The record gives the reactivity of an RNA of 207 nucleotides to 2A3.
RNA sequence: GGGAACGACUCGAGUAGAGUCGAAAAACAGAAAAAAGGAGUUUAAAUUAGAUUUGCAAACGGACGGUACUAAAUACCGUCACUUUUACGUCUAACUUAUCGUUAACUCUGCAAAAAGCAAACAAGAAAAACAAGCGUGAGUUCGCUCACGCUUGAACUCUCAGUGUAGGUUCGCCUACACUGAGAGAAAAGAAACAACAACAACAAC
Reactivity to 2A3 in 0.01 (KOAc 150mM, MgCl2 10mM, bicine 150mM(pH8.5), 24C), signal-to-noise 2, nucleotides 027 to 156: a000c010a000g170a030a100a000a000a060a090g030g020a050g000u060u100u080a060a040a090u010u000a020g020a030u100u110u270g050c080a050a030a000c030g000g000a000c000g000g000u030a040c070u300a050a060a030u050a000c000c000g000u000c010a040c000u020u010u010u050a040c000g040u000c000u000a020a080c060u050u060a060u160c010g030u000u030a010a010c000u000c020u020g000c060a100a180a030a040a000g030c060a040a020a150c040a010a180g160a090a110a010a000a050c000a000a000g000c000g010u010g000a000g030u030u150c190g020c100u000c000a000c000g000c000u000u000g000a000a000
High 2A3 reactivity points to a flexible backbone, as in loops and unpaired stretches. Conditions: 150 mM KOAc, 10 mM MgCl2 and 150 mM bicine (pH 8.5), 24 C. Reactivities are rounded to 0.1 and cut off at 0 and 3.